[RMDB]
RNA sequence: GGGAACGACUCGAGUAGAGUCGAAAAAAAAAGGUAUAUCAAGGGAAGAUCGAAAGAUCAUGCUCGAUAGAUAUACAUCCCACAGGAAACUGAAAAUCGAGCAAUCGCUAAAAGCGAAAGCAAAAAACGAUUAUUCCUAGUUCGCUAGGAAUAAUCGAAAAGAAACAACAACAACAAC
Reactivity to 2A3 in 0.01 (KOAc 150mM, MgCl2 10mM, bicine 150mM(pH8.5), 24C), signal-to-noise 1, nucleotides 027 to 126: a000a000a040a040a000g130g000u020a010u010a000u030c010a030a030g020g000g000a010a030g000a000u010c020g010a100a000a000g000a010u010c020a030u250g000c010u000c010g060a090u110a180g030a000u010a000u010a030c010a020u020c000c030c010a020c010a010g080g060a090a090a000c020u060g040a040a140a050a130u170c060g020a010g070c050a010a040u010c010g000c050u110a220a080a070a060g000c000g010a020a020a010g000c000a010a120a050a000a000a000
Reactivity to DMS in 0.01 (KOAc 150mM, MgCl2 10mM, bicine 150mM(pH8.5), 24C), signal-to-noise 2, nucleotides 027 to 126: a040a110a010a060a080g020g010u000a000u000a040u000c000a130a210g000g000g020a010a050g000a000u000c000g000a120a070a100g000a010u010c000a040u010g000c040u020c010g050a080u010a030g000a000u000a000u000a000c050a080u000c020c000c000a220c080a080g010g020a060a150a180c040u000g010a130a040a060a060u000c170g010a100g000c010a020a270u010c000g000c010u020a060a020a100a170g000c030g000a010a040a230g020c040a000a010a060a070a040a060